Structure probing data (DMS and 2A3) for a 177-nucleotide construct. The DMS profile rests on 3,056 reads.
[RMDB]
RNA sequence: GGGAACGACUCGAGUAGAGUCGAAAAGAUAUGGAAGGUCUCCAAGUGCAUCGAUCACUCGUCGGAAACGACGAGUGGGAGCAUGGAGCCUUCCUAAGUCAAAGGAGCUAGCUUCGGCUAGCUCCAACCAUACCAUCACCUUCGGGUGAUGGUAUGGAAAAGAAACAACAACAACAAC
Reactivity to DMS in 0.01 (KOAc 150mM, MgCl2 10mM, bicine 150mM(pH8.5), 24C), signal-to-noise 3, nucleotides 027 to 126: g000a010u010a010u020g000g000a030a010g000g000u010c000u000c000c000a300a300g030u010g020c000a300u000c250g000a000u030c000a000c000u000c000g010u000c000g010g000a010a000a020c000g030a000c010g000a000g000u000g010g000g010a000g070c000a100u020g010g000a020g000c010c000u010u010c000c000u000a000a080g000u000c000a100a150a140g000g010a020g010c000u000a000g000c000u000u010c270g020g000c000u000a000g000c000u000c000c000a000a040
Reactivity to 2A3 in 0.01 (KOAc 150mM, MgCl2 10mM, bicine 150mM(pH8.5), 24C), signal-to-noise 4, nucleotides 027 to 126: g010a000u010a010u030g000g000a000a030g000g010u210c020u020c100c020a200a130g300u100g100c050a090u300c240g000a000u010c010a000c010u000c000g000u010c010g010g000a020a000a000c000g000a000c020g000a010g000u000g000g010g010a020g000c030a070u150g020g000a000g000c000c000u000u000c000c000u000a000a000g000u000c020a020a080a260g000g000a010g000c010u000a010g000c000u080u140c300g080g000c000u010a000g000c000u050c000c000a000a010
2A3 adducts were read by reverse transcription with SuperScript II with manganese.
Reactivities are given for positions 27 through 126.
The data come from the RNA Mapping Database (RMDB), library TTRDES.
Conditions: 150 mM KOAc, 10 mM MgCl2 and 150 mM bicine (pH 8.5), 24 C.